[RMDB]
RNA sequence: GGGAACGACUCGAGUAGAGUCGAAAAGAAUCUCACUUGGGCGGGUGCUUUAGUGACUCCAGCGCGUAUUAGUGAGAUUAUGAAUACUGGGGAUUUAUGGUUGAAAUGAUUACGCGCAAAGUAAGAAGGGUAUUGUAAUGUUCGCAUUACAAUACCCAAAAGAAACAACAACAACAAC
Reactivity to 2A3 in 0.01 (KOAc 150mM, MgCl2 10mM, bicine 150mM(pH8.5), 24C), signal-to-noise 4, nucleotides 027 to 126: g110a030a030u000c000u010c030a000c010u070u090g030g030g030c130g020g200g020u280g040c010u030u100u160a090g040u050g060a060c000u080c070c030a020g000c000g000c000g020u040a030u030u030a020g040u010g030a010g000a000u000u010a050u020g050a030a000u050a070c070u140g000g050g060g010a010u000u110u020a050u040g030g020u020u020g050a110a090a020u020g030a020u050u130a010c000g000c000g000c020a000a040a020g070u170a060a120g090a120a130
Reactivity to DMS in 0.01 (KOAc 150mM, MgCl2 10mM, bicine 150mM(pH8.5), 24C), signal-to-noise 2, nucleotides 027 to 126: g000a090a040u020c070u000c000a010c000u000u030g010g000g010c060g020g000g000u000g000c030u000u000u020a110g000u030g020a140c130u020c050c070a050g000c000g000c010g010u000a030u010u010a130g010u000g010a300g010a000u010u000a010u080g000a020a030u010a050c090u030g000g010g020g000a120u000u000u000a020u000g000g000u000u000g000a100a040a030u010g000a080u020u010a010c040g010c010g030c040a040a060a050g000u040a100a090g030a130a080